This 177-nucleotide RNA was probed chemically with DMS and 2A3. Values cover nucleotides 27 to 126. It was measured as part of the RMDB library OK2TST.

[RMDB]
RNA sequence: GGGAACGACUCGAGUAGAGUCGAAAACGCCCACCUGUGUGCUUUUCCUCCAGACGGUUACUCAUCGGAGGACAUCGUCUACUACUGGUCGGAGAGCCAGGAGCACAUCCACGGGCUGGACAAGCUGCCUCUUACUGGGUUUCGACCCAGUAAGAGGAAAAGAAACAACAACAACAAC
Reactivity to DMS in 0.01 (KOAc 150mM, MgCl2 10mM, bicine 150mM(pH8.5), 24C), signal-to-noise 2, nucleotides 027 to 126: c240g000c000c000c000a090c160c060u000g030u000g030u010g000c020u030u000u000u000c030c030u000c110c100a030g030a080c010g000g000u000u000a300c030u000c020a250u030c280g030g000a000g010g000a130c190a000u000c030g000u000c030u000a080c100u000a140c100u010g000g000u000c050g020g010a120g010a140g020c000c040a040g000g000a010g000c060a010c020a080u000c120c120a060c160g000g000g020c120u000g000g020a070c130a030a130g030c100u020g020
Reactivity to 2A3 in 0.01 (KOAc 150mM, MgCl2 10mM, bicine 150mM(pH8.5), 24C), signal-to-noise 2, nucleotides 027 to 126: c090g070c020c010c000a080c010c010u090g040u000g020u010g010c010u020u030u100u100c020c020u050c020c010a000g000a000c030g000g030u030u050a020c010u010c090a230u300c200g300g020a020g000g000a000c010a000u030c050g060u010c000u040a080c030u030a050c020u060g060g000u040c090g230g140a140g000a020g080c020c000a030g000g010a020g000c000a000c000a040u030c060c000a050c180g010g020g040c050u030g060g030a030c030a120a000g100c070u080g030
For DMS, 1,106 sequencing reads were counted.